[RMDB]
RNA sequence: GGGAACGACUCGAGUAGAGUCGAAAAGAAGAGCCGGGCUAACAAAGGUGGGAGGCACCCAACCCUUCGCAAGAGCCGAGUGCGAAGGCUAAGCGAAACCAAGACAAAAUGGUUAUAAAUAAUGCAAGAUAAUUGGUGUGUUCGCACACCAAUUAUCAAAAGAAACAACAACAACAAC
Reactivity to DMS in 0.01 (KOAc 150mM, MgCl2 10mM, bicine 150mM(pH8.5), 24C), signal-to-noise 1, nucleotides 027 to 126: g000a180a160g020a110g080c010c030g040g030g000c070u000a110a100c080a110a110a080g010g060u000g000g000g000a040g030g010c110a060c000c020c040a070a120c170c020c000u000u010c010g020c010a050a110g000a070g000c010c110g000a120g010u000g040c020g000a050a040g000g020c160u000a040a110g000c030g000a060a080a030c020c020a040a060g020a090c130a050a010a130a080u000g000g000u010u000a110u020a140a020a060u000a020a010u030g000c130a160a070
Reactivity to 2A3 in 0.01 (KOAc 150mM, MgCl2 10mM, bicine 150mM(pH8.5), 24C), signal-to-noise 1, nucleotides 027 to 126: g070a040a000g030a000g090c060c030g020g030g000c010u060a060a080c000a110a080a050g110g000u040g110g000g000a010g050g070c000a030c020c000c000a010a110c010c010c030u060u050c000g000c030a080a000g000a010g120c020c020g000a010g090u100g020c030g050a020a030g000g000c000u100a040a010g040c000g000a030a000a000c060c020a040a020g130a120c130a090a100a010a040u070g010g010u070u040a150u060a180a050a060u220a070a030u100g010c030a070a100

The data come from the RNA Mapping Database (RMDB), library M2PK90. An RNA of 177 nucleotides, treated with DMS and 2A3 and read out base by base. DMS adducts were read by reverse transcription with MarathonRT. High 2A3 reactivity points to a flexible backbone, as in loops and unpaired stretches. Values are in units of 0.01, from 0 to 300, in steps of 10.